The record gives the reactivity of an RNA of 207 nucleotides to DMS and 2A3. High 2A3 reactivity points to a flexible backbone, as in loops and unpaired stretches. DMS adducts were read by reverse transcription with MarathonRT.
[RMDB]
RNA sequence: GGGAACGACUCGAGUAGAGUCGAAAACUUGCGGGCUGCGCAAGGUGCGCCGGUUGAGGCGGUGCAAGAGGAACAACCCACGUACUGCGACGACUGCGGAGGAUUCGGCCACGUGCUGGAUGGUGCGCAGAAGUUCAAGUGCAUCACUUGCAAAGGCCAGAACUACUCAGUUCGCUGAGUAGUUCUGAAAAGAAACAACAACAACAAC
Reactivity to DMS in 0.01 (KOAc 150mM, MgCl2 10mM, bicine 150mM(pH8.5), 24C), signal-to-noise 1, nucleotides 027 to 156: c040u000u000g000c000g000g070g030c020u000g020c120g020c080a090a100g030g020u000g020c000g020c020c010g030g010u000u000g010a140g020g020c010g000g000u000g030c020a070a040g010a270g010g000a200a110c010a090a070c040c000c010a110c150g000u000a020c050u000g000c070g030a100c000g000a260c000u000g050c000g010g010a200g030g000a120u000u000c040g000g000c000c020a180c160g010u000g000c000u000g000g000a040u000g000g020u000g000c020g000c000a130g000a010a160g000u000u000c030a110a050g000u000g010c010a000u000c030a050c050u000u010g000c070a070a070a120g010g000c100
Reactivity to 2A3 in 0.01 (KOAc 150mM, MgCl2 10mM, bicine 150mM(pH8.5), 24C), signal-to-noise 4, nucleotides 027 to 156: c010u000u020g010c040g020g170g100c090u130g020c070g010c030a020a000g020g030u070g020c010g000c010c030g090g040u090u170g100a100g030g050c000g000g010u010g000c010a040a060g080a170g120g050a150a100c060a070a110c040c000c000a050c060g020u030a020c010u020g020c040g030a020c000g010a020c010u010g000c020g010g070a030g080g080a020u000u030c000g000g000c010c010a170c250g090u300g000c010u000g010g000a020u030g030g130u150g060c000g000c010a020g010a020a000g010u010u040c060a050a010g000u000g030c000a040u070c030a010c030u010u040g000c000a070a060a030g040g010c010